The data come from the RNA Mapping Database (RMDB), library ARCHII.
Chemical mapping of a 207-nucleotide RNA with DMS and 2A3.
2A3 is a SHAPE reagent: it acylates the 2'-hydroxyl of flexible nucleotides of all four kinds.
For 2A3, 2,013 sequencing reads were counted.
The RNA was probed in 150 mM KOAc, 10 mM MgCl2 and 150 mM bicine (pH 8.5) at 24 C.
DMS adducts were read by reverse transcription with MarathonRT.

[RMDB]
RNA sequence: GGGAACGACUCGAGUAGAGUCGAAAAUAGCUGCUGCUCGUGCAGUGAGUGCGACAUCACCAAAUUGCGGGAAAUCCCUAAAGCUUUGACUACCAAGUGCGGCGCCGAAAGGCUCGCAUGGCCAGGGUAAUGACCUCGGGUAUGGUAACAACGUCAACGUAUAUCCAAUCUUCGGAUUGGAUAUACGAAAAGAAACAACAACAACAAC
Reactivity to DMS in 0.01 (KOAc 150mM, MgCl2 10mM, bicine 150mM(pH8.5), 24C), signal-to-noise 1, nucleotides 027 to 156: u010a170g070c020u010g050c050u050g030c080u010c090g070u010g000c070a190g020u010g010a030g060u030g010c060g000a050c140a110u000c020a070c100c010a100a100a040u010u010g000c060g000g000g000a110a160a170u000c000c010c000u030a050a120a200g030c020u010u000u030g030a070c040u010a130c040c040a210a190g030u000g070c010g030g030c060g010c000c030g000a100a070a210g010g040c000u000c010g000c010a000u000g010g020c010c010a020g000g020g020u010a050a090u020g010a070c030c000u010c060g000g000g040u000a050u010g000g000u010a100a120c080a020a010c030g010u000c010a000a160
Reactivity to 2A3 in 0.01 (KOAc 150mM, MgCl2 10mM, bicine 150mM(pH8.5), 24C), signal-to-noise 3, nucleotides 027 to 156: u090a010g010c010u010g000c000u020g020c010u060c220g220u230g020c040a050g030u040g120a060g080u080g030c040g000a040c040a080u130c020a050c050c030a020a120a110u170u150g020c080g020g010g010a040a060a060u060c010c020c000u090a150a110a000g050c030u060u080u080g010a020c010u000a000c030c070a050a010g000u000g000c010g010g060c130g000c050c010g040a100a080a050g000g010c000u000c000g020c000a000u020g000g000c010c020a020g000g020g000u080a120a150u100g040a040c000c010u040c120g000g020g000u100a210u110g000g000u030a020a010c000a000a020c030g020u000c010a010a010